[RMDB]
RNA sequence: GGGAACGACUCGAGUAGAGUCGAAAAGAUAGGUAAGGAACAGAAGUGUUGCAUGUGCAAUAGACGCGCUGCAGCGUACUCUUCACCUCUGCAAUCUUAUGCCUGCUGGACUCAUUCCUGCGGUUAUGUAGAGUCGUGUUCGCACGACUCAAAAGAAACAACAACAACAAC
Reactivity to DMS in 0.01 (KOAc 150mM, MgCl2 10mM, bicine 150mM(pH8.5), 24C), signal-to-noise 5, nucleotides 027 to 129: g050a080u050a100g020g040u020a060a040g010g020a050a100c120a000g000a000a070g030u070g030u040u030g100c030a000u080g000u010g000c210a090a050u030a060g020a070c100g060c030g000c110u090g010c140a070g000c030g000u000a100c080u040c050u000u000c070a040c020c020u000c020u000g020c060a000a000u020c100u030u020a070u000g000c000c000u000g050c010u000g040g010a080c190u020c090a150u060u000c030c030u030g040c060g040g020u120u000a060u070g010u100a110
Reactivity to 2A3 in 0.01 (KOAc 150mM, MgCl2 10mM, bicine 150mM(pH8.5), 24C), signal-to-noise 7, nucleotides 027 to 129: g030a040u100a030g020g060u050a060a060g070g000a130a060c030a050g070a100a000g040u080g020u120u000g000c010a030u180g020u000g010c040a010a040u100a080g060a040c070g020c020g040c130u170g030c100a050g000c010g000u090a130c000u010c000u040u000c010a020c000c000u000c020u020g000c000a030a040u000c020u070u080a060u110g010c010c000u020g000c010u050g010g020a030c030u040c070a090u080u050c020c010u060g010c020g090g000u090u110a050u150g090u080a040
Description: Structure probing data (DMS and 2A3) for a 170-nucleotide construct. The RNA was probed in 150 mM KOAc, 10 mM MgCl2 and 150 mM bicine (pH 8.5) at 24 C. The data come from the RNA Mapping Database (RMDB), library 15KLIB. For 2A3 the reverse transcriptase was SuperScript II with manganese. Values are in units of 0.01, from 0 to 300, in steps of 10.